The data come from the RNA Mapping Database (RMDB), libraries RFM100 and RFMREP.
An RNA of 177 nucleotides, treated with DMS and 2A3 and read out base by base.
For 2A3 the reverse transcriptase was SuperScript II with manganese.
Values cover nucleotides 27 to 126.
Conditions: 150 mM KOAc, 10 mM MgCl2 and 150 mM bicine (pH 8.5), 24 C.

[RMDB]
RNA sequence: GGGAACGACUCGAGUAGAGUCGAAAAGAAAGAAAGUUGUGGCUCCCCUCUCUAAUUCUUGCUCCCCAGGUGAGAGUGCUUUGUGAAUGCAAUCCACCUGGGCAAGGAUUCUGAAUGUGAGAGCUAACCUGACAGUGAUAUUCGUAUCACUGUCAGGAAAAGAAACAACAACAACAAC
Reactivity to DMS in 0.01 (KOAc 150mM, MgCl2 10mM, bicine 150mM(pH8.5), 24C), signal-to-noise 2, nucleotides 027 to 126: g030a150a110a080g020a150a110a100g000u000u000g010u020g000g000c030u010c020c020c000c050u010c090u050c000u010a060a030u000u000c010u000u000g010c180u020c210c090c010c000a000g000g000u000g000a160g000a020g050u000g010c020u000u020u030g010u050g000a050a060u020g000c020a010a020u010c000c000a000c000c000u000g000g020g000c010a000a020g000g000a010u000u000c160u000g000a020a080u000g020u010g010a040g010a070g010c010u000a080a150
Reactivity to 2A3 in 0.01 (KOAc 150mM, MgCl2 10mM, bicine 150mM(pH8.5), 24C), signal-to-noise 7, nucleotides 027 to 126: g120a000a080a010g110a020a100a020g020u010u020g000u030g040g000c000u000c000c010c010c000u000c010u000c000u010a000a000u010u000c000u000u020g020c040u230c020c020c000c000a000g000g000u020g020a300g010a010g050u000g010c000u110u280u180g210u150g130a150a080u190g000c000a000a010u000c000c000a000c000c000u000g000g000g000c000a000a000g000g000a000u130u040c090u120g050a070a040u080g040u070g040a110g010a000g010c010u020a060a060